[RMDB]
RNA sequence: GGGAACGACUCGAGUAGAGUCGAAAAAAAACUGAUAUUCACGAUAAGCGCUAUCCUUCCGUUGUAUUCAAGCUUGGUUGUCGAGUACACGUGCUCGGAUAACGCUCAUCGAGUCUGAUCGGUUAAAGGAUUAUCAAUGGUUCGCCAUUGAUAAUCCAAAAGAAACAACAACAACAAC
Reactivity to DMS in 0.01 (KOAc 150mM, MgCl2 10mM, bicine 150mM(pH8.5), 24C), signal-to-noise 1, nucleotides 027 to 126: a060a000a030a010c010u000g010a030u000a010u010u000c010a100c010g000a010u000a020a000g010c020g010c000u000a000u000c000c000u000u010c000c000g010u010u000g060u000a010u000u000c010a120a170g010c060u030u010g010g010u010u000g000u000c150g000a020g000u000a010c010a010c020g010u000g000c160u010c160g000g000a010u000a000a010c010g020c010u000c020a030u000c000g000a020g000u000c020u000g000a010u000c010g040g000u000u000a070a090a110
Reactivity to 2A3 in 0.01 (KOAc 150mM, MgCl2 10mM, bicine 150mM(pH8.5), 24C), signal-to-noise 2, nucleotides 027 to 126: a000a000a000a000c000u000g010a000u000a020u020u030c010a000c010g000a000u000a020a000g000c010g000c000u000a000u000c010c000u010u000c030c010g070u080u100g010u020a020u000u010c040a100a110g020c100u150u150g190g110u280u070g160u160c060g000a000g010u010a010c000a000c010g060u090g030c080u010c030g000g000a000u000a000a000c010g000c000u000c000a000u010c000g000a000g000u010c010u060g130a020u000c010g000g020u010u040a100a060a040